[RMDB]
RNA sequence: GGGAACGACUCGAGUAGAGUCGAAAACGAAGGAAAGCUUGACCAGCUAAUCUUCUGCAACCCCAUUACGAGGACUGCCCUUAGAGGCUCAUGGCGAUAGGUCACCCCGCCGGUCGGUCAGCUGCUUAUACCCGUGCACGGUUCGCCGUGCACGGAACGAUACCAACAGCUUCGGCUGUUGGUAUCGAAAAGAAACAACAACAACAAC
Reactivity to 2A3 in 0.01 (KOAc 150mM, MgCl2 10mM, bicine 150mM(pH8.5), 24C), signal-to-noise 1, nucleotides 027 to 156: c010g010a000a000g030g050a270a080a010g000c010u070u050g020a110c000c030a010g000c020u040a020a040u080c020u030u010c010u030g050c070a100a190c000c000c030c000a070u110u200a060c130g020a000g110g020a040c040u050g040c030c000c000u040u050a060g010a120g060g040c000u000c060a040u130g000g000c040g010a070u070a140g000g170u070c020a170c050c020c030c000g030c000c110g000g000u040c010g000g000u000c060a000g000c070u100g000c060u230u090a100u110a200c000c000c000g000u000g000c000a000c010g000g060u010u060c170g030c060c000g000u000g000c000a000c000g000g000a000a000
Source: RMDB library M2RFPK, as collected in RNAgym.
Structure probing data (2A3) for a 207-nucleotide construct.
2A3 adducts were read by reverse transcription with SuperScript II with manganese.